[RMDB]
RNA sequence: GGGAACGACUCGAGUAGAGUCGAAAACAUGACUUUAGAUUUAUUGUGGUAUUCUUAAUAACUUCAAUAGAAACUGUCUCGGGAAUAUCAAUUGUAACAGGAUGACUGUAACCUAAAUUUAGAAUAAACAUAGAGUACGGUUCGCCGUACUCUAUGUAAAAGAAACAACAACAACAAC
Reactivity to 2A3 in 0.01 (KOAc 150mM, MgCl2 10mM, bicine 150mM(pH8.5), 24C), signal-to-noise 2, nucleotides 027 to 126: c050a070u120g060a030c000u120u140u110a040g020a020u040u070u020a080u080u160g060u010g010g000u010a020u090u030c060u030u210a170a130u030a130a140c010u090u030c060a010a120u000a210g090a020a120a020c030u050g040u040c040u000c120g080g010g040a050a070u060a010u080c060a020a140u090u150g010u040a060a010c000a020g030g040a070u090g090a050c010u010g000u020a000a030c000c000u060a120a080a080u100u080u080a040g060a120a070u120a110a190
Reactivity to DMS in 0.01 (KOAc 150mM, MgCl2 10mM, bicine 150mM(pH8.5), 24C), signal-to-noise 2, nucleotides 027 to 126: c060a060u000g030a160c110u000u000u000a040g030a110u010u000u000a040u000u000g000u000g020g000u000a040u000u000c080u000u010a070a070u010a090a060c020u000u000c040a060a120u010a080g010a140a060a080c080u000g000u010c060u010c190g020g010g010a060a020u000a000u000c020a060a130u000u010g000u000a060a020c000a030g020g000a160u020g000a190c020u000g000u010a030a070c030c170u010a010a020a070u000u000u010a060g010a070a110u000a050a080
An RNA of 177 nucleotides, treated with 2A3 and DMS and read out base by base. The RNA was probed in 150 mM KOAc, 10 mM MgCl2 and 150 mM bicine (pH 8.5) at 24 C. For DMS, 1,471 sequencing reads were counted.